RNA sequence: GGGAACGACUCGAGUAGAGUCGAAAAGAUAUGGAGCCACCUAUGGGAGCUAUUGGAUCGGAAACGAUCCAAAUAGCGACGAUCAUAAGGUGGCUCCUAAGUCAAAAUCGUCAGUUCGCUGACGAAAGCAAAUGUACUAGUUCGCUAGUACAUUUGCAAAAGAAACAACAACAACAAC
Reactivity to 2A3 in 0.01 (KOAc 150mM, MgCl2 10mM, bicine 150mM(pH8.5), 24C), signal-to-noise 1, nucleotides 027 to 126: g020a020u060a010u160g000g000a000g000c020c000a000c000c000u000a010u030g050g000g010a060g010c000u010a010u020u010g010g000a000u040c010g000g020a040a010a070c000g010a010u020c010c030a060a040a030u010a020g000c000g050a040c050g020a030u040c010a010u090a190a130g000g000u000g010g010c000u000c000c010u000a000a000g000u000c000a010a000a010a160u030c000g000u010c000a010g010u030u090c160g020c180u020g000a010c030g010a070a000a000
Reactivity to DMS in 0.01 (KOAc 150mM, MgCl2 10mM, bicine 150mM(pH8.5), 24C), signal-to-noise 3, nucleotides 027 to 126: g000a030u000a300u000g010g000a020g040c000c000a010c000c000u000a020u000g000g010g000a030g020c000u000a010u000u000g000g000a000u000c010g010g010a120a120a240c010g010a010u000c000c000a000a010a030u000a000g000c000g000a080c280g010a040u000c000a010u000a040a060g040g020u000g000g010c010u000c000c000u010a010a080g020u010c030a070a080a180a160u000c000g000u000c000a020g040u000u020c280g030c020u000g020a000c000g010a010a060a130